[RMDB]
RNA sequence: GGGAACGACUCGAGUAGAGUCGAAAAACCUGAGCAGACGAAGCAGGACCCCGAACGUAUCGCCGAGCUGAAGGAGGGUAUAGAGAAGUACAGGCAGGUGGUCCAGGAGAAGGUCCGUGCCGCAGGACAAGAAACCGGUUUUCGAACCGGUUUCUUGAAAAGAAACAACAACAACAAC
Reactivity to DMS in 0.01 (KOAc 150mM, MgCl2 10mM, bicine 150mM(pH8.5), 24C), signal-to-noise 1, nucleotides 027 to 126: a070c000c010u000g010a060g030c070a080g010a130c090g010a110a150g030c070a110g000g010a100c020c010c070c050g000a160a160c040g010u020a090u000c020g010c020c010g010a160g040c030u000g000a100a060g000g010a090g010g020g020u000a120u010a150g000a190g020a050a060g050u000a060c080a130g000g030c050a170g020g010u000g010g010u000c050c020a080g000g030a110g000a040a080g000g010u000c010c000g020u000g050c050c020g020c100a090g000g000a200
Structure probing data (DMS) for a 177-nucleotide construct. Values are in units of 0.01, from 0 to 300, in steps of 10. The reactions ran in a buffer of 150 mM KOAc, 10 mM MgCl2 and 150 mM bicine (pH 8.5), at 24 C. It was measured as part of the RMDB library OK2TST. For DMS, 693 sequencing reads were counted.